[RMDB]
RNA sequence: GGGAACGACUCGAGUAGAGUCGAAAAGCACAGGGACCAGUUGAGGCGGACGAGCCUCUGUAUAUAGUCGUGACGACAACCAUAGUUACAAAAACAAGUGUUCGUUGCAACUGAUCACUGUCGACCGGGCGGUGACAUCGUUCGCGAUGUCACCGCCAAAAGAAACAACAACAACAAC
Reactivity to 2A3 in 0.01 (KOAc 150mM, MgCl2 10mM, bicine 150mM(pH8.5), 24C), signal-to-noise 1, nucleotides 027 to 126: g070c080a000c000a040g070g020g000a060c000c000a030g000u120u000g000a020g050g010c100g000g000a090c050g050a000g070c000c000u040c000u030g070u000a230u050a000u050a080g060u000c000g000u080g260a090c120g010a040c030a130a000c110c020a140u200a210g020u050u050a040c010a080a000a000a110a000c050a080a010g000u030g000u120u000c000g000u050u070g000c000a000a000c000u000g010a000u000c000a010c030u020g020u050c070g000a000c000c000g100